Structure probing data (DMS and 2A3) for a 177-nucleotide construct. DMS adducts were read by reverse transcription with MarathonRT. Values cover nucleotides 27 to 126. For DMS, 35,661 sequencing reads were counted. Source: RMDB library VIROID, as collected in RNAgym.
[RMDB]
RNA sequence: GGGAACGACUCGAGUAGAGUCGAAAACGGUCAACCUCUUAAGUUCCUCUUCUUCCUCCUUGCUGAGGUUCUUCCCUCCUCCGGCAAGCUGCUUCCUUUUGUUCUCGAGGGCCUUCCUUCGUCGGUGCAUUCUAUAUUAGUUCGCUAAUAUAGAAUGAAAAGAAACAACAACAACAAC
Reactivity to DMS in 0.01 (KOAc 150mM, MgCl2 10mM, bicine 150mM(pH8.5), 24C), signal-to-noise 9, nucleotides 027 to 126: c100g010g000u000c050a070a110c050c020u000c040u000u010a090a130g010u000u000c010c010u000c050u000u000c040u000u000c020c010u000c040c020u000u000g020c050u000g000a070g010g010u000u000c070u000u000c020c010c010u000c030c010u000c040c050g010g010c060a050a070g010c090u000g000c050u000u000c020c010u000u000u000u010g010u000u000c020u000c030g010a100g010g010g010c070c040u000u000c020c010u000u000c070g020u000c040g010g010u000g010
Reactivity to 2A3 in 0.01 (KOAc 150mM, MgCl2 10mM, bicine 150mM(pH8.5), 24C), signal-to-noise 5, nucleotides 027 to 126: c030g010g050u050c030a050a060c030c020u060c030u100u150a150a080g030u080u030c000c000u020c010u060u010c000u050u030c010c010u020c000c000u030u040g010c030u030g020a030g050g000u030u020c020u030u020c000c000c010u030c000c000u010c020c000g020g000c010a020a010g010c020u040g010c000u060u080c000c000u050u090u080u180g050u070u020c020u010c020g020a060g010g050g020c000c010u060u040c010c000u040u080c030g070u020c020g020g020u040g040